[RMDB]
The data come from the RNA Mapping Database (RMDB), library M2RFOK. This 207-nucleotide RNA was probed chemically with 2A3 and DMS. DMS (dimethyl sulfate) methylates the pairing face of unpaired adenines and cytosines. For DMS, 5,095 sequencing reads were counted.
RNA sequence: GGGAACGACUCGAGUAGAGUCGAAAACGCAAAGCUGCAGCGCGGCGCUCUGGAGGCCUUGCCCCGCGCACUGCUCUUUACAUGGCCCGACGUGAGGGCACCUCGCGGGCAGUGCUGCGGCCUCGUGAAACUGCCCCUAAGUUCGCUUAGGGGCAAACACUAACUAAACUUUCGAGUUUAGUUAGUGAAAAGAAACAACAACAACAAC
Reactivity to 2A3 in 0.01 (KOAc 150mM, MgCl2 10mM, bicine 150mM(pH8.5), 24C), signal-to-noise 6, nucleotides 027 to 156: c050g010c020a060a030a020g010c010u020g000c000a010g040c010g010c010g270g080c090g020c070u040c050u170g050g000a010g000g020c060c110u070u090g000c010c000c000c000g000c000g000c010a030c050u070g020c010u030c040u120u200u180a140c090a170u200g020g000c010c030c050g090a140c010g010u020g030a300g000g000g000c000a020c000c000u030c010g160c040g020g010g010c010a010g010u010g000c000u010g000c000g000g000c000c000u000c000g010u020g020a100a040a030c070u050g010c010c000c000c000u010a000a010g010u020u100c110g050c150u000u000a000g000g000g010g000c000a000a000a000
Reactivity to DMS in 0.01 (KOAc 150mM, MgCl2 10mM, bicine 150mM(pH8.5), 24C), signal-to-noise 2, nucleotides 027 to 156: c070g020c020a000a050a070g000c040u000g020c000a050g020c020g020c040g020g040c080g000c070u000c030u000g090g020a050g010g020c030c120u000u000g010c010c000c020c030g010c050g000c020a100c040u000g000c020u010c090u000u000u000a150c190a160u000g020g000c040c030c010g000a080c060g000u010g010a170g040g030g020c020a020c020c020u000c030g050c160g010g030g070c010a100g010u020g000c000u000g030c000g000g010c010c010u000c050g000u010g010a170a070a070c090u000g010c030c000c010c000u000a030a040g010u000u000c300g000c020u000u010a020g000g000g040g050c010a000a000a010
Conditions: 150 mM KOAc, 10 mM MgCl2 and 150 mM bicine (pH 8.5), 24 C. For 2A3 the reverse transcriptase was SuperScript II with manganese.